[RMDB]
RNA sequence: GGGAACGACUCGAGUAGAGUCGAAAAUGCCGCGGCGCCGGUCGGGGUGGGCGUAGGCGGCGAUCAGGCGCUGGGAGAAGCCCCAGCACAUUUUGCCGUGUGUUGAGCGGUGGGUAGCGCGUGCGCGCGGUAUGUUCGCGUUCGCGCGAACAUACCGAAAAGAAACAACAACAACAAC
Reactivity to 2A3 in 0.01 (KOAc 150mM, MgCl2 10mM, bicine 150mM(pH8.5), 24C), signal-to-noise 2, nucleotides 027 to 126: u090g000c000c000g030c020g040g020c010g030c020c020g050g030u090c070g000g000g000g020u080g060g030g000c010g000u050a070g150g110c030g020g020c010g000a110u060c030a050g060g050c010g010c070u020g010g070g020a230g090a150a060g070c050c040c030c010a000g000c010a000c000a010u120u200u090u080g040c000c020g050u050g040u020g030u040u130g080a140g010c080g100g000u120g090g080g000u050a040g060c010g010c040g030u110g030c090g000c000g000
Reactivity to DMS in 0.01 (KOAc 150mM, MgCl2 10mM, bicine 150mM(pH8.5), 24C), signal-to-noise 1, nucleotides 027 to 126: u010g020c000c000g030c030g010g000c010g020c000c020g000g000u000c130g000g010g020g040u020g000g010g020c060g040u000a080g010g020c010g000g000c020g000a060u000c120a120g040g000c050g000c010u010g010g000g000a150g010a180a220g000c130c000c010c000a040g010c020a030c030a030u000u000u000u000g000c070c060g000u020g020u010g020u000u010g010a100g000c030g030g010u000g000g000g020u000a100g020c040g010c020g000u000g000c070g020c010g010
Notes:
The record gives the reactivity of an RNA of 177 nucleotides to 2A3 and DMS. High 2A3 reactivity points to a flexible backbone, as in loops and unpaired stretches. The reactions ran in a buffer of 150 mM KOAc, 10 mM MgCl2 and 150 mM bicine (pH 8.5), at 24 C. The 2A3 profile rests on 1,486 reads. The DMS profile rests on 1,588 reads. Reactivities are rounded to 0.1 and cut off at 0 and 3.